[RMDB]
RNA sequence: GGGAACGACUCGAGUAGAGUCGAAAAAGCGGCGUCUACGGACGCCGCACUACGUGAUGAGCAAUUCUUUAUUACUAGUUAUCCCUGGCAGAACUACUGUGUUGAUAACAUUACAACUCUGAAUCAAAUCAAAGAAAGCUUUCGAGCUUUCUUUGAUAAAAGAAACAACAACAACAAC
Reactivity to 2A3 in 0.01 (KOAc 150mM, MgCl2 10mM, bicine 150mM(pH8.5), 24C), signal-to-noise 2, nucleotides 027 to 126: a010g060c010g030g000c030g010u060c000u020a100c300g150g000a040c000g000c010c010g000c000a000c000u010a030c020g020u020g030a040u020g010a000g130c140a210a300u260u140c070u060u060u100a040u010u020a020c050u040a040g010u080u060a030u060c030c000c030u010g050g000c060a040g010a210a030c070u120a060c080u170g000u010g010u070u000g070a170u070a140a030c020a110u180u210a010c030a070a010c050u000c010u120g180a040a100u040c000a200a160
Structure probing data (2A3) for a 177-nucleotide construct. For 2A3, 471 sequencing reads were counted. The RNA was probed in 150 mM KOAc, 10 mM MgCl2 and 150 mM bicine (pH 8.5) at 24 C. For 2A3 the reverse transcriptase was SuperScript II with manganese.